[RMDB]
RNA sequence: GGGAACGACUCGAGUAGAGUCGAAAAUACCUGAGAAUUUUUCAAUAGUGUGAAAUCUGCCAAUCCGCACUAGGCCAGCGUGGUGGACUAAAGCCUAAACCUUCUCAGAAGUAGAAGAGGUCCGUGCCUCAUGAAUGGAAUUCGUUCCAUUCAUGAGAAAAGAAACAACAACAACAAC
Reactivity to 2A3 in 0.01 (KOAc 150mM, MgCl2 10mM, bicine 150mM(pH8.5), 24C), signal-to-noise 5, nucleotides 027 to 126: u030a000c000c000u030g020a050g060a170a150u090u130u080u120u110c060a140a120u080a140g070u070g020u010g140a090a060a050u040c030u050g010c020c010a030a100u050c040c020g000c000a030c040u040a050g040g040c010c020a020g000c030g050u050g010g000u030g010g020a010c030u080a090a030a070g020c000c000u060a090a090a090c020c010u060u010c020u020c020a160g040a300a020g050u130a010g020a110a000g050a060g000g030u010c030c030g050u080g040c010
Reactivity to DMS in 0.01 (KOAc 150mM, MgCl2 10mM, bicine 150mM(pH8.5), 24C), signal-to-noise 5, nucleotides 027 to 126: u000a100c040c010u010g010a110g040a050a050u010u000u000u010u020c060a060a170u000a060g020u000g010u000g010a060a150a110u010c060u000g010c050c030a070a110u000c140c040g010c030a060c080u000a090g000g000c020c050a060g010c080g040u000g000g030u000g010g010a050c050u000a060a090a280g020c020c020u000a030a080a110c120c050u010u000c000u000c020a090g010a080a130g010u000a040g000a050a060g000a110g020g010u000c030c040g010u010g010c130

The record gives the reactivity of an RNA of 177 nucleotides to 2A3 and DMS.
For 2A3 the reverse transcriptase was SuperScript II with manganese.
The data come from the RNA Mapping Database (RMDB), library OK2TST.
For DMS the reverse transcriptase was MarathonRT.
For DMS, 5,001 sequencing reads were counted.
For 2A3, 5,556 sequencing reads were counted.